[RMDB]
RNA sequence: GGGAACGACUCGAGUAGAGUCGAAAAAGGGGAACUGACGAGUACAUCAAACCCCGAACAAGCUCGGUUCGCAAGGGCGGCCGCCCCUUUCGGAUAAGCUAAGCCACGUCGGAUCACAAAGGUGACAGUAUGUCUUGGACUUCGGUCCAAGACAUACAAAAGAAACAACAACAACAAC
Reactivity to DMS in 0.01 (KOAc 150mM, MgCl2 10mM, bicine 150mM(pH8.5), 24C), signal-to-noise 2, nucleotides 027 to 126: a090g010g000g020g000a140a120c090u000g000a090c060g020a220g010u170a060c050a230u040c070a020a060a260c000c000c000c000g040a070a020c260a050a040g020c020u000c120g000g050u000u000c040g000c080a070a030g020g000g000c060g000g000c100c100g000c040c000c000c000u000u000u000c000g000g000a050u010a200a130g000c000u090a130a070g020c070c000a150c100g000u000c070g040g050a250u010c100a020c020a080a080a080g010g020u020g000a030c120a080
Reactivity to 2A3 in 0.01 (KOAc 150mM, MgCl2 10mM, bicine 150mM(pH8.5), 24C), signal-to-noise 3, nucleotides 027 to 126: a020g020g000g000g000a060a030c070u060g030a030c020g030a030g130u090a050c030a040u030c050a040a070a070c020c000c000c000g000a070a040c060a070a000g020c020u020c040g060g040u080u020c010g030c050a060a010g100g000g000c010g020g060c090c040g080c000c000c010c020u040u020u030c020g040g000a040u020a040a000g000c030u010a060a010g010c000c000a050c010g060u060c040g000g030a100u060c020a020c090a060a150a030g130g020u030g050a010c010a010
Source information: Structure probing data (DMS and 2A3) for a 177-nucleotide construct. It was measured as part of the RMDB library RFM100. For 2A3, 1,996 sequencing reads were counted. The reactions ran in a buffer of 150 mM KOAc, 10 mM MgCl2 and 150 mM bicine (pH 8.5), at 24 C.